About this RNA: Conditions: 150 mM KOAc, 10 mM MgCl2 and 150 mM bicine (pH 8.5), 24 C. An RNA of 170 nucleotides, treated with 2A3 and DMS and read out base by base.
RNA sequence: GGGAACGACUCGAGUAGAGUCGAAAACUGACAAUUCUACAACUGUUAGUGUUACUGUAUCCAGUAACAUGGUUGAAACUGUUGUGGGUCAACUUGAGCAAACUAAUAUGCAUAGUCCUGAUGUUAUAAAUCAUCCAGUUCGCUGGAUGAAAAAGAAACAACAACAACAAC
Reactivity to 2A3 in 0.01 (KOAc 150mM, MgCl2 10mM, bicine 150mM(pH8.5), 24C), signal-to-noise 9, nucleotides 027 to 129: c060u030g040a010c050a070a230u190u020c020u030a010c000a020a000c010u020g020u050u040a050g010u010g000u010u010a010c000u010g080u180a140u160c220c020a000g000u000a000a000c010a000u010g080g040u100u170g080a070a020a000c000u010g000u000u000g000u010g030g000g000u030c030a060a070c060u050u120g060a030g080c020a050a040a100c040u160a060a150u130a090u220g020c030a050u050a030g040u050c010c020u050g050a070u050g100u130u100a160u110a110a090a050
Reactivity to DMS in 0.01 (KOAc 150mM, MgCl2 10mM, bicine 150mM(pH8.5), 24C), signal-to-noise 8, nucleotides 027 to 129: c070u040g010a050c110a110a110u060u120c050u000a050c050a000a000c000u000g010u010u030a100g050u030g020u010u030a020c010u000g040u090a110u090c280c030a030g020u020a070a000c020a000u000g000g050u050u080g010a030a160a040c030u030g030u000u000g030u020g010g010g000u030c040a070a070c100u020u050g000a040g000c030a060a060a060c120u060a030a040u070a070u070g040c000a110u020a060g040u040c030c020u030g020a050u040g020u010u010a090u040a050a050a060
The 2A3 profile rests on 39,006 reads. For DMS the reverse transcriptase was MarathonRT. 2A3 adducts were read by reverse transcription with SuperScript II with manganese.